[RMDB]
RNA sequence: GGGAACGACUCGAGUAGAGUCGAAAAGGCUACAAGGGGAAAGGUGUUUGGUCAGGCAUAAUGGAAAACACAAAUGUACAGAUCCUGAUAGAUGGUGAUGGUUCAUCAAACUGGAUAGAAGAAAUUAUAUUAUGACUAUGUUCGCAUAGUCAUAAUAAAAAGAAACAACAACAACAAC
Reactivity to 2A3 in 0.01 (KOAc 150mM, MgCl2 10mM, bicine 150mM(pH8.5), 24C), signal-to-noise 7, nucleotides 027 to 126: g040g000c030u060a020c060a040a060g040g020g010g030a040a070a020g030g000u030g030u020u050u070g070g010u030c030a030g030g000c020a030u070a130a070u150g050g050a060a020a100a000c090a020c020a050a140a050u130g020u070a020c020a040g080a070u020c000c000u020g010a050u100a100g070a050u060g010g060u040g030a070u090g080g060u130u060c000a030u000c000a030a160a060c040u040g020g010a040u050a110g090a110a010g050a020a160a020u260u110a100
Reactivity to DMS in 0.01 (KOAc 150mM, MgCl2 10mM, bicine 150mM(pH8.5), 24C), signal-to-noise 9, nucleotides 027 to 126: g010g010c040u000a060c090a100a100g010g010g010g010a070a090a070g010g020u000g010u000u000u000g010g020u010c050a070g010g010c100a050u010a070a100u000g010g000a060a050a070a060c090a070c110a050a080a080u010g010u010a080c110a100g000a070u000c010c010u000g000a120u010a080g010a070u000g010g010u000g010a070u010g010g010u000u000c020a010u000c040a030a090a100c070u000g000g000a060u000a090g010a090a100g000a080a070a070u010u000a120
The record gives the reactivity of an RNA of 177 nucleotides to 2A3 and DMS. It was measured as part of the RMDB library OK2TRN. 2A3 adducts were read by reverse transcription with SuperScript II with manganese. The 2A3 profile rests on 10,573 reads.